Chemical mapping of a 177-nucleotide RNA with 2A3 and DMS. Source: RMDB library M2PK90, as collected in RNAgym. The RNA was probed in 150 mM KOAc, 10 mM MgCl2 and 150 mM bicine (pH 8.5) at 24 C.

RNA sequence: GGGAACGACUCGAGUAGAGUCGAAAAUUAAAUAGCGUAAUCGACAUUGAGAAUGUACGCUAAGUGUGUGUUGUAUGGGCAACGUCCAAUUGUACACACACACAGUUGGACCUAAUGUCGAAAAAAAGCACUAUGCUUGAUUCGUCAAGCAUAGUGCAAAAGAAACAACAACAACAAC
Reactivity to 2A3 in 0.01 (KOAc 150mM, MgCl2 10mM, bicine 150mM(pH8.5), 24C), signal-to-noise 3, nucleotides 027 to 126: u120u080a020a010a090u040a030g030c020g020u040a050a040u070c010g010a000c000a000u000u050g010a020g020a110a080u160g030u030a010c010g000c020u000a090a070g000u000g000u000g000u000g020u110u190g030u070a050u090g060g010g000c090a300a090c150g080u100c050c000a050a050u090u120g020u040a010c020a000c020a000c000a000c000a000c010a020g060u150u130g080g030a030c010c000u020a020a000u020g000u000c010g040a080a020a000a000a010a000a020
Reactivity to DMS in 0.01 (KOAc 150mM, MgCl2 10mM, bicine 150mM(pH8.5), 24C), signal-to-noise 2, nucleotides 027 to 126: u010u000a020a070a090u000a060g030c010g000u010a060a020u000c010g000a030c000a020u020u010g000a090g040a080a080u010g010u000a000c000g010c000u010a000a110g010u000g000u000g020u000g000u000u000g020u000a050u010g020g030g000c040a120a110c300g020u000c010c000a150a130u000u000g020u000a010c000a000c020a000c040a000c000a000c000a030g000u010u000g000g030a220c020c020u000a010a010u000g000u000c000g020a030a000a040a080a040a070a040